[RMDB]
Source information
The record gives the reactivity of an RNA of 207 nucleotides to DMS and 2A3. For DMS, 2,215 sequencing reads were counted. Reactivities are given for positions 27 through 156. For 2A3 the reverse transcriptase was SuperScript II with manganese.
RNA sequence: GGGAACGACUCGAGUAGAGUCGAAAAAUGAUGUCCAUCUAUGCCAAUCAAGACGCCUCUCCAACCAUUGCCAUGCACGUCUUUGAAGCAAAAAAUACCGCUAAUAACUUCAAUGCCUUCUUGAGAGUCUCCAUAUGGGAAAAACAGAUCAUGAAACCCUCUAAUAUUUCUUCGGAAAUAUUAGAGGAAAAGAAACAACAACAACAAC
Reactivity to DMS in 0.01 (KOAc 150mM, MgCl2 10mM, bicine 150mM(pH8.5), 24C), signal-to-noise 1, nucleotides 027 to 156: a130u020g000a080u010g000u020c010c020a130u000c040u000a120u000g020c050c030a090a070u000c050a050a110g000a080c080g020c030c020u000c010u000c010c020a070a060c030c070a110u000u000g020c020c000a060u010g020c060a080c030g020u010c050u000u000u040g010a080a000g060c040a000a030a110a120a040a080u010a080c050c030g010c090u010a090a050u000a100a050c010u000u000c000a010a040u000g010c010c020u010u000c020u000u040g030a130g010a140g050u000c010u000c030c020a060u010a060u000g010g040g000a040a020a040a080a100c030a040g030a100u000c010a040u010g000a110a090a210c070
Reactivity to 2A3 in 0.01 (KOAc 150mM, MgCl2 10mM, bicine 150mM(pH8.5), 24C), signal-to-noise 3, nucleotides 027 to 156: a000u070g020a030u050g040u050c030c010a060u010c060u080a060u120g040c030c010a030a090u090c030a090a010g040a040c020g030c010c010u020c000u000c020c000a040a060c020c010a050u020u100g020c030c030a030u070g040c030a020c060g030u020c020u010u070u110g040a040a010g010c020a020a030a010a030a070a030u090a080c040c030g000c050u060a050a050u080a110a090c010u080u030c060a030a080u050g010c000c000u020u040c030u040u050g010a040g010a040g050u040c030u000c020c020a020u050a060u170g010g040g030a020a010a080a010a010c050a010g110a080u120c020a010u130g080a120a040a070c030